[RMDB]
RNA sequence: GGGAACGACUCGAGUAGAGUCGAAAACGUUGACAAAGACGGUGAUUCGCUCCUUCCUGUCAGCAUCAAGGUACCUCGAAGGCAGCUGAUCGACUUUCACGAGGAUUUGUAUCCUGAUCUCGCCGGGCUUGGUAAGUUUUUAUAAUGUCCUGGCAGCGACUAGGCUGCAUUUCGAUGCAGCCUAGUCAAAAGAAACAACAACAACAAC
Reactivity to 2A3 in 0.01 (KOAc 150mM, MgCl2 10mM, bicine 150mM(pH8.5), 24C), signal-to-noise 1, nucleotides 027 to 156: c000g000u000u000g020a010c050a050a130a040g000a050c010g000g100u080g060a160u090u080c020g000c010u000c040c000u040u000c000c000u080g070u110c050a010g050c050a040u160c050a060a060g160g000u110a090c010c010u050c000g030a000a020g060g020c160a000g030c000u060g010a140u000c010g040a050c000u080u100u020c020a030c070g010a070g060g000a130u000u080u270g060u020a190u020c000c000u010g000a050u000c020u000c010g000c000c040g000g000g020c050u130u070g010g010u050a000a210g000u010u000u270u000u070a050u110a080a070u060g020u140c000c000u000g000g000c000a000g030c040